[RMDB]
RNA sequence: GGGAACGACUCGAGUAGAGUCGAAAAGAAGAAGGAGCCGUUCCACGCAGGACGCGAACAAGAUGAAGCCGUAGCAACUUCAGUUAGCCGCGCACGAACUGGCGCUCGAUCUCCGCCUAGCUAGAGUGAUGCAUAAUAUCUUCGGAUAUUAUGCAUCAAAAGAAACAACAACAACAAC
Reactivity to DMS in 0.01 (KOAc 150mM, MgCl2 10mM, bicine 150mM(pH8.5), 24C), signal-to-noise 4, nucleotides 027 to 126: g000a080a060g010a160a140g030g000a060g030c040c010g020u000u000c000c040a080c080g020c070a090g010g000a100c070g010c040g000a030a060c100a090a060g000a120u010g000a070a030g000c040c040g000u000a090g010c080a060a090c020u000u000c030a060g000u010u000a110g020c120c030g000c060g030c080a060c100g000a060a050c080u000g010g010c040g020c040u000c040g010a070u010c020u000c020c040g000c060c020u010a060g010c090u000a070g020a130g010u000
Reactivity to 2A3 in 0.01 (KOAc 150mM, MgCl2 10mM, bicine 150mM(pH8.5), 24C), signal-to-noise 4, nucleotides 027 to 126: g080a040a010g030a050a050g090g010a010g000c010c010g020u050u000c020c000a050c050g030c040a060g040g040a040c020g010c020g050a040a040c070a100a020g060a120u080g020a050a000g020c060c060g060u050a010g040c020a030a040c010u090u070c010a030g010u040u060a030g020c030c020g000c020g030c010a020c070g030a100a030c050u080g040g000c020g000c010u020c020g090a110u000c010u020c030c010g000c020c020u070a060g030c010u050a020g030a040g110u070